[RMDB]
RNA sequence: GGGAACGACUCGAGUAGAGUCGAAAAAUGCAUAAACAUGCAUAUUGUGUCGUAUUUGAGCCGUUAACGCCCAAAUUGCGCGCCGACGUAGGGUUACUAUCUGUCAAUAUCCAACCAGGGCAAUUACACACACGAACGUGUUCGCACGUUCGUGUGUAAAAGAAACAACAACAACAAC
Reactivity to DMS in 0.01 (KOAc 150mM, MgCl2 10mM, bicine 150mM(pH8.5), 24C), signal-to-noise 1, nucleotides 027 to 126: a000u010g030c000a050u000a130a040a250c280a060u000g010c000a010u000a090u000u010g000u000g020u010c010g000u000a080u000u000u010g050a140g000c020c020g010u000u000a130a050c240g000c000c060c000a010a030a000u010u000g100c010g000c100g000c120c150g020a070c020g020u000a040g020g000g000u000u000a080c040u000a000u000c090u000g000u020c080a070a020u000a030u000c040c010a080a070c070c060a120g020g020g000c190a050a060u000u000a090c090
Reactivity to 2A3 in 0.01 (KOAc 150mM, MgCl2 10mM, bicine 150mM(pH8.5), 24C), signal-to-noise 1, nucleotides 027 to 126: a000u010g040c020a030u120a160a260a170c090a040u020g020c060a000u040a190u090u080g060u020g160u110c040g000u040a100u020u020u030g000a000g010c000c040g010u050u140a060a020c070g030c000c000c000a070a140a000u040u030g020c010g000c020g020c020c000g030a090c070g040u020a070g030g050g020u100u030a040c030u040a090u110c040u000g040u070c040a000a090u050a070u170c040c010a020a010c000c040a060g000g010g020c010a000a010u100u020a040c070